[RMDB]
Annotation: An RNA of 177 nucleotides, treated with DMS and read out base by base. The data come from the RNA Mapping Database (RMDB), library TTRINS. DMS adducts were read by reverse transcription with MarathonRT. Values cover nucleotides 27 to 126.
RNA sequence: GGGAACGACUCGAGUAGAGUCGAAAAGAUAUGGAAUGGACUUUGCUGCCCGAGAAUGGAGCUCUGGGUCGGAAACGACCUCUAAGAGCUAUGAAGUUCUCGGGCAGCAAAGUCACAUUCCUAAGUCCAUAAAGCUUAUGUUCGCAUAAGCUUUAUGAAAAGAAACAACAACAACAAC
Reactivity to DMS in 0.01 (KOAc 150mM, MgCl2 10mM, bicine 150mM(pH8.5), 24C), signal-to-noise 5, nucleotides 027 to 126: g010a110u010a300u010g010g000a010a000u000g000g000a020c000u000u010u000g010c000u000g010c010c000c000g010a030g000a020a010u000g000g010a030g020c000u000c000u000g000g000g010u010c000g010g000a110a110a240c010g010a010c000c000u000c300u010a110a030g000a010g010c000u010a150u010g010a150a260g000u000u000c000u000c000g010g000g010c010a000g000c000a010a000a000g010u000c000a010c010a000u000u000c010c000u010a040a120g010u000c050